[RMDB]
An RNA of 177 nucleotides, treated with 2A3 and read out base by base.
Reactivities are given for positions 27 through 126.
RNA sequence: GGGAACGACUCGAGUAGAGUCGAAAACGACUGAAAUAUUUAAGCCUCCAUUUGAUACCGAUGCCCCAUACUCAUGAAUUUCGGAUUUACACGUGGUUUGUCUGAUCUGUUCAUCUAGUGUCGCCUCGCCCCCAUACCGUUUCGACGGUAUGGGGGCAAAAGAAACAACAACAACAAC
Reactivity to 2A3 in 0.01 (KOAc 150mM, MgCl2 10mM, bicine 150mM(pH8.5), 24C), signal-to-noise 1, nucleotides 027 to 126: c050g110a030c010u070g020a000a170a080u230a100u130u270u250a000a000g000c020c020u000c130c000a080u000u000u140g000a020u020a000c000c000g060a000u030g020c020c000c000c000a050u100a010c020u040c060a110u060g080a040a060u030u000u170c000g000g000a000u040u000u180a050c000a040c090g020u020g000g060u000u000u030g100u070c020u050g000a020u050c020u100g000u110u010c000a000u010c040u040a000g020u000g000u180c030g090c000c000u070c020

The data come from the RNA Mapping Database (RMDB), library OK1LIB. The 2A3 profile rests on 407 reads.